This 177-nucleotide RNA was probed chemically with DMS.
[RMDB]
RNA sequence: GGGAACGACUCGAGUAGAGUCGAAAAGAUAUGGACCAUCCACGACGCGUUGAUCUAGCUCGGAAACGAGCUAGGGAGCGUACAAGUGGAGUGGUCCUAAGUCAAAAGUAAGCCUUCGGGCUUACAACGAGCUGACAGAGUUCGCUCUGUCAGCUCGAAAAGAAACAACAACAACAAC
Reactivity to DMS in 0.01 (KOAc 150mM, MgCl2 10mM, bicine 150mM(pH8.5), 24C), signal-to-noise 1, nucleotides 027 to 126: g040a090u000a300u010g000g000a060c000c000a090u000c000c000a000c000g010a090c010g000c000g090u010u020g020a040u010c000u000a000g000c020u030c030g060g000a060a040a120c000g050a010g000c000u000a000g000g000g000a010g050c000g000u000a120c120a230a240g000u010g000g010a060g040u000g010g060u000c000c000u000a030a160g000u010c050a110a110a130a180g000u000a020a010g010c000c000u000u020c200g050g000g000c000u000u000a000c010a080a220
Source: RMDB library TTRDES, as collected in RNAgym. The RNA was probed in 150 mM KOAc, 10 mM MgCl2 and 150 mM bicine (pH 8.5) at 24 C.